An RNA of 177 nucleotides, treated with DMS and 2A3 and read out base by base. For DMS, 4,257 sequencing reads were counted. The RNA was probed in 150 mM KOAc, 10 mM MgCl2 and 150 mM bicine (pH 8.5) at 24 C. For 2A3 the reverse transcriptase was SuperScript II with manganese. Source: RMDB library OK2TST, as collected in RNAgym.
[RMDB]
RNA sequence: GGGAACGACUCGAGUAGAGUCGAAAAGAUAUCCACGUCCGAACACCCAAUAGCAUCGAUGCACGCUGGCGAGGUGUUCUCCUCCAAGGAGCUCCCCUUGAAAUACGCAGGGAUAAGCCCGUGCUUCGUUAACAUCUACGUUCGCGUAGAUGUUAACAAAAGAAACAACAACAACAAC
Reactivity to DMS in 0.01 (KOAc 150mM, MgCl2 10mM, bicine 150mM(pH8.5), 24C), signal-to-noise 5, nucleotides 027 to 126: g010a130u000a070u000c030c030a110c080g010u000c170c080g000a040a060c070a060c000c010c030a090a300u010a030g010c060a060u000c060g010a120u000g010c080a060c070g010c050u010g010g010c300g000a060g010g020u000g000u000u000c010u000c040c030u000c130c060a070a110g000g010a100g000c060u000c060c020c000c010u010u000g000a060a060a130u010a070c140g010c100a130g000g010g010a080u000a080a140g000c010c010c010g010u010g030c070u000u000c180
Reactivity to 2A3 in 0.01 (KOAc 150mM, MgCl2 10mM, bicine 150mM(pH8.5), 24C), signal-to-noise 3, nucleotides 027 to 126: g020a030u080a020u100c020c000a060c060g060u070c070c050g040a030a010c030a020c030c000c020a040a040u090a030g010c010a060u090c090g230a120u180g000c090a010c080g040c040u040g000g010c030g060a150g000g020u020g010u030u000c010u010c000c000u010c030c030a080a070g020g000a090g010c040u060c020c000c010c030u030u060g070a070a080a020u260a050c080g000c100a040g090g000g000a030u030a110a040g050c010c020c000g000u030g020c060u040u050c030